[RMDB]
RNA sequence: GGGAACGACUCGAGUAGAGUCGAAAAAUAAAACAAGUUCAAGCUGCGUUUUUUAAAAAAUCUUGAUUUAUGAAAACAGGCAAUGCAUGAACCAUAGUUUACCACCUCUGAACUAGACCAUAACUUGCCCUUGUUGAGCAUACAUUCCAGUCACCUGACACAUACUCAUUUUCGAAUGAGUAUGUGUAAAAGAAACAACAACAACAAC
Reactivity to 2A3 in 0.01 (KOAc 150mM, MgCl2 10mM, bicine 150mM(pH8.5), 24C), signal-to-noise 3, nucleotides 027 to 156: a000u030a020a020a000a010c020a040a040g000u080u050c030a060a070g050c030u060g000c030g020u040u010u030u070u090u190a110a180a040a030a010a020u100c090u110u110g030a120u090u040u100a060u050g020a060a010a010a000c030a040g120g000c000a070a100u090g020c030a030u030g010a010a020c030c030a070u060a090g010u020u040u060a090c080c040a080c050c040u080c070u050g050a050a040c010u010a050g050a030c020c000a050u020a100a080c030u030u050g010c000c000c010u020u070g030u030u030g030a030g040c030a010u060a080c060a030u070u030c020c000a000g050u010c020a060c090c020u030g040
Reactivity to DMS in 0.01 (KOAc 150mM, MgCl2 10mM, bicine 150mM(pH8.5), 24C), signal-to-noise 2, nucleotides 027 to 156: a130u010a040a060a050a090c040a100a080g000u010u000c050a080a170g020c010u000g020c070g010u010u010u010u000u010u060a030a060a100a100a100a090u010c060u010u000g000a100u000u010u000a040u020g000a030a030a040a060c050a120g010g020c020a110a080u010g070c050a100u000g010a020a020c010c020a050u000a040g010u000u000u000a050c030c020a070c040c030u010c020u010g030a030a070c030u000a060g000a040c030c000a140u000a050a050c030u000u010g000c000c020c020u000u000g020u000u010g030a120g000c050a100u010a040c060a090u000u020c020c030a060g000u000c060a050c060c010u000g010
Conditions: 150 mM KOAc, 10 mM MgCl2 and 150 mM bicine (pH 8.5), 24 C. An RNA of 207 nucleotides, treated with 2A3 and DMS and read out base by base. DMS adducts were read by reverse transcription with MarathonRT. The 2A3 profile rests on 1,768 reads. 2A3 adducts were read by reverse transcription with SuperScript II with manganese.